An RNA of 207 nucleotides, treated with 2A3 and DMS and read out base by base.
RNA sequence: GGGAACGACUCGAGUAGAGUCGAAAAAGAGAGCUCUGAUUCAUAUGAGAAAUCAAGAAUCGAACCUUCAUCUUGAAGAUAUAAACCUUUUGCCAUGUAAAUGUGAAGGAGGAAAAAAAUGGAAGAGAAUCUACGAUUUUAAAAGGCAUAUUUUAGACACGUCCUACCUAUUCGUAGGUAGGACGUGAAAAGAAACAACAACAACAAC
Reactivity to 2A3 in 0.01 (KOAc 150mM, MgCl2 10mM, bicine 150mM(pH8.5), 24C), signal-to-noise 3, nucleotides 027 to 156: a000g060a000g000a000g020c010u000c020u090g050a050u000u030c060a040u080a190u300g020a010g020a060a030a040u010c010a030a090g020a020a010u020c020g020a060a080c010c030u060u050c020a130u020c030u040u050g020a110a010g030a020u060a020u030a210a180a130c050c000u070u120u100u060g050c030c000a060u070g020u140a060a150a070u110g020u050g060a050a050g010g010a020g050g040a020a120a000a000a010a010a040u080g020g000a030a020g040a010g010a060a010u010c020u050a050c050g030a050u000u010u050u300a040a180a000a000g000g060c040a030u060a100u110u140u110u190a070g020a030
Reactivity to DMS in 0.01 (KOAc 150mM, MgCl2 10mM, bicine 150mM(pH8.5), 24C), signal-to-noise 1, nucleotides 027 to 156: a050g010a140g000a060g000c070u000c050u000g070a100u000u010c040a100u000a230u000g000a120g010a080a080a120u000c040a040a110g020a050a080u000c010g020a050a060c000c030u000u000c010a140u010c030u010u000g030a160a010g000a090u000a130u020a130a190a110c060c000u000u000u000u000g030c010c000a020u030g020u000a040a070a050u000g020u020g030a030a040g010g010a120g030g040a000a000a000a050a120a150a070u010g010g000a040a030g000a140g010a030a050u030c000u000a070c050g000a190u000u000u020u000a070a090a040a060g000g020c000a070u000a080u000u020u000u000a090g000a300
For DMS, 1,657 sequencing reads were counted.